Structure probing data (2A3 and DMS) for a 170-nucleotide construct. For 2A3, 70,618 sequencing reads were counted. It was measured as part of the RMDB library 15KLIB.
RNA sequence: GGGAACGACUCGAGUAGAGUCGAAAAGUUCUUGAGGGCCUUCCUUCGUCGGUGAUCCUGCCUCUCCCUGUCGGUGAAUCCUCCCCUGAGAGGCCUCUUCCUAGGUCCGGAGUCUACCUCCAUCUGGCACACUAAUGCUUCGGCAUUAGUAAAAGAAACAACAACAACAAC
Reactivity to 2A3 in 0.01 (KOAc 150mM, MgCl2 10mM, bicine 150mM(pH8.5), 24C), signal-to-noise 9, nucleotides 027 to 129: g020u050u030c020u070u090g040a090g020g030g010c000c000u040u040c040c000u040u060c030g100u020c030g020g060u060g030a090u050c000c010u040g050c010c000u020c020u040c010c010c010u070g110u110c070g030g040u080g080a060a080u060c010c000u020c000c000c000c020u040g040a070g010a030g080g010c000c000u030c000u030u010c000c010u020a040g020g030u000c030c030g010g000a020g010u020c050u060a100c020c000u010c010c000a060u020c040u050g040g000c050a050c000
Reactivity to DMS in 0.01 (KOAc 150mM, MgCl2 10mM, bicine 150mM(pH8.5), 24C), signal-to-noise 9, nucleotides 027 to 129: g030u010u000c030u000u000g020a140g020g000g030c040c030u010u010c000c030u010u000c030g010u020c050g010g020u020g020a110u010c050c040u000g000c050c020u000c040u020c010c050c050u000g040u040c060g010g020u000g010a110a110u020c030c020u000c010c000c010c000u020g000a090g020a100g040g000c010c010u030c050u000u020c010c020u000a060g030g040u020c020c050g050g010a060g000u040c070u020a170c030c000u000c010c020a080u030c060u040g010g040c120a060c180
2A3 adducts were read by reverse transcription with SuperScript II with manganese.